[RMDB]
RNA sequence: GGGAACGACUCGAGUAGAGUCGAAAAAUAUGGAAGGUAGGAAUCGAAGUUUUGGGAUCGAGAAUUUGUCAUCAAAUAAUACCUAUAAGAGGUUCACCAACAAGUGACAGACUACUUUCCUAAAAAGAACUUUCGAGUUAUUCGUAACUCGAAAGUUAAAAGAAACAACAACAACAAC
Reactivity to 2A3 in 0.01 (KOAc 150mM, MgCl2 10mM, bicine 150mM(pH8.5), 24C), signal-to-noise 5, nucleotides 027 to 126: a010u230a090u130g000g000a000a000g020g000u010a000g040g160a090a110u050c020g020a060a020g050u000u070u270u200g110g030g030a080u040c010g010a000g050a110a080u020u010u060g010u010c030a070u040c040a130a060a020u250a080a080u120a110c010c010u090a070u150a300a220g090a020g100g010u060u100c110a100c090c010a030a120c060a080a020g040u030g050a020c010a010g010a010c000u000a000c000u000u000u000c000c000u010a030a020a000a000a000g070
Reactivity to DMS in 0.01 (KOAc 150mM, MgCl2 10mM, bicine 150mM(pH8.5), 24C), signal-to-noise 3, nucleotides 027 to 126: a090u060a120u060g000g010a020a030g030g000u000a000g040g020a190a110u030c010g010a030a110g000u000u000u010u000g030g010g010a080u000c000g010a020g010a100a070u050u050u000g010u000c010a020u010c040a050a070a060u020a110a080u000a030c000c020u000a200u070a100a110g020a000g000g000u000u000c150a120c080c100a020a090c170a060a160g000u000g000a010c030a050g000a030c000u000a000c000u000u000u020c000c000u000a010a020a060a100a040g000